Conditions: 150 mM KOAc, 10 mM MgCl2 and 150 mM bicine (pH 8.5), 24 C. The record gives the reactivity of an RNA of 177 nucleotides to 2A3. Source: RMDB library OK1LIB, as collected in RNAgym. Values cover nucleotides 27 to 126.
[RMDB]
RNA sequence: GGGAACGACUCGAGUAGAGUCGAAAACAAAACAAAAAGAUAGCAAAGCACGCAUGCUAUCAGAGAUGAACUAAGCAAGCGAGCUUGCUUAGAAAACAAAACAAAACAAAAACAAAACAAAACAAAACGGAUGUAUAAAGUUCGCUUUGUGCGUCCGAAAAGAAACAACAACAACAAC
Reactivity to 2A3 in 0.01 (KOAc 150mM, MgCl2 10mM, bicine 150mM(pH8.5), 24C), signal-to-noise 2, nucleotides 027 to 126: c010a010a040a000a000c050a010a060a030a000a000g010a000u010a000g000c000a000a040a000g050c010a000c030g040c010a010u020g000c000u000a000u000c000a000g010a000g000a020u030g000a010a010c000u000a000a000g000c000a000a000g000c010g210a010g030c000u000u000g000c000u000u000a000g000a040a140a000a000c060a000a060a000a000c020a010a050a000a000c050a020a060a000a000a000c040a020a060a000a000c010a010a030a000a000c020a000a050a000a000